An RNA of 177 nucleotides, treated with 2A3 and DMS and read out base by base. Source: RMDB library RFM100, as collected in RNAgym.
RNA sequence: GGGAACGACUCGAGUAGAGUCGAAAACCGAGAUCCGUCACAGGUGCCCCUAGCUGAGUAGGCUAAGGCGUUUUAAGGUAAACUAGCUAAGGGAAAUCGGCAAAAUGGCCCCGUAACUUUGGAAGAAUAUACGACCAACAUUCGUGUUGGUCGUAUAAAAAGAAACAACAACAACAAC
Reactivity to 2A3 in 0.01 (KOAc 150mM, MgCl2 10mM, bicine 150mM(pH8.5), 24C), signal-to-noise 3, nucleotides 027 to 126: c000c000g030a000g010a050u090c010c020g070u100c110a050c030a050g000g050u010g070c020c000c000c000u000a000g000c000u040g090a000g080u160a040g180g150c000u030a040a110g130g000c060g010u000u060u070u200a150a070g060g000u090a120a070a020c020u070a020g030c020u020a000a060g080g010g010a040a070a090u060c000g020g000c040a040a030a040a070u050g060g030c010c020c010c010g040u060a070a050c120u020u120u100g060g050a020a050g020a100a020
Reactivity to DMS in 0.01 (KOAc 150mM, MgCl2 10mM, bicine 150mM(pH8.5), 24C), signal-to-noise 3, nucleotides 027 to 126: c000c000g010a090g000a050u020c020c030g020u000c160a110c090a110g000g000u000g000c030c000c030c050u000a030g000c010u000g000a130g050u000a190g020g000c040u020a080a070g020g000c080g020u010u020u040u060a130a180g020g020u010a070a050a050c010u010a050g030c020u020a040a060g010g000g010a070a060a110u010c020g000g010c080a050a040a110a130u040g000g040c010c000c020c050g020u010a070a060c040u010u000u010g010g040a120a030g000a100a070

Overview: Reactivities are rounded to 0.1 and cut off at 0 and 3. DMS adducts were read by reverse transcription with MarathonRT. The reactions ran in a buffer of 150 mM KOAc, 10 mM MgCl2 and 150 mM bicine (pH 8.5), at 24 C. Reactivities are given for positions 27 through 126. For 2A3 the reverse transcriptase was SuperScript II with manganese.